Chemical mapping of a 207-nucleotide RNA with DMS and 2A3. DMS adducts were read by reverse transcription with MarathonRT. The reactions ran in a buffer of 150 mM KOAc, 10 mM MgCl2 and 150 mM bicine (pH 8.5), at 24 C.

RNA sequence: GGGAACGACUCGAGUAGAGUCGAAAAGCUAACUAGGGAGGCUGAGGCAGAAGGAUCAUUUGAGCCUAGGAGGUGGAUGCUACAGUGAGCUAUGAUUGCACCAAGAUUUUGGCACAUCUCAUCUUUUGGAUUGGGAUGUUUUUCUGCACUAUUUGACCGAUAUGUUCUAAUUCGUUAGAACAUAUCGAAAAGAAACAACAACAACAAC
Reactivity to DMS in 0.01 (KOAc 150mM, MgCl2 10mM, bicine 150mM(pH8.5), 24C), signal-to-noise 4, nucleotides 027 to 156: g020c040u000a080a090c070u000a120g010g020g000a080g020g030c030u000g030a070g010g040c040a070g020a080a070g020g020a070u000c040a140u000u000u010g010a080g000c040c020u000a120g020g010a090g020g060u000g020g010a080u010g000c050u010a080c050a070g010u000g010a080g030c040u010a110u000g010a090u000u000g030c040a080c010c020a040a080g010a190u000u000u000u000g010g030c100a060c020a020u000c000u000c030a080u000c020u000u000u000u020g020g010a050u000u010g030g000g000a040u000g010u000u000u000u000u000c010u000g000c060a070c090u020a170u000u000u000g010a240c130
Reactivity to 2A3 in 0.01 (KOAc 150mM, MgCl2 10mM, bicine 150mM(pH8.5), 24C), signal-to-noise 8, nucleotides 027 to 156: g020c020u040a010a070c020u050a070g030g010g000a010g040g000c040u050g020a030g040g000c020a010g020a080a030g040g020a040u050c040a060u080u090u160g040a030g000c000c030u050a040g000g050a010g000g020u030g040g020a070u080g020c050u070a050c020a060g030u020g060a010g000c010u030a050u150g050a100u050u110g030c050a040c020c010a050a060g100a210u110u110u100u130g040g000c020a010c000a030u010c010u000c000a030u010c020u090u230u110u290g170g010a070u040u110g000g000g000a000u010g010u010u030u010u030u020c030u050g010c020a020c070u120a110u120u080u150g060a040c040